[RMDB]
RNA sequence: GGGAACGACUCGAGUAGAGUCGAAAAUUUUGUGGUUCGUGCUGUAUAUGUGCUGCCUUCUCAAGGAAUCGGAAGUGACUUCACACCCAUUUGGAAUGCGGUCAAAAAGUUUACUGCUGGUGCGCGGACAUUUUUCAAGAUUCGUCUUGAAAAAUGUAAAAGAAACAACAACAACAAC
Reactivity to 2A3 in 0.01 (KOAc 150mM, MgCl2 10mM, bicine 150mM(pH8.5), 24C), signal-to-noise 4, nucleotides 027 to 126: u070u090u040u120g090u040g010g020u050u040c060g020u050g020c010u050g070u110a090u070a090u300g030u050g020c010u010g000c000c000u060u010c060u040c040a060a090g100g020a090a060u080c030g000g000a040a010g040u030g030a080c010u040u030c020a010c010a010c000c020c010a060u100u070u060g020g060a060a010u070g020c060g010g000u040c030a030a100a030a010a050g030u080u130u120a070c040u040g010c010u030g050g010u020g010c050g000c010g000g010
Reactivity to DMS in 0.01 (KOAc 150mM, MgCl2 10mM, bicine 150mM(pH8.5), 24C), signal-to-noise 9, nucleotides 027 to 126: u000u010u010u010g020u000g010g010u000u000c110g020u000g020c020u000g010u000a080u000a090u010g010u010g010c030u000g010c030c020u000u000c040u000c080a110a100g000g010a110a060u010c080g010g010a090a060g010u000g000a060c020u000u000c040a200c270a090c040c010c020a090u000u000u010g020g010a100a050u000g010c110g010g000u010c070a040a070a090a050a060g010u000u000u000a040c040u000g000c050u000g010g010u000g000c090g020c070g010g000
Chemical mapping of a 177-nucleotide RNA with 2A3 and DMS. High 2A3 reactivity points to a flexible backbone, as in loops and unpaired stretches. Source: RMDB library OK2TST, as collected in RNAgym. For 2A3, 4,945 sequencing reads were counted. 2A3 adducts were read by reverse transcription with SuperScript II with manganese.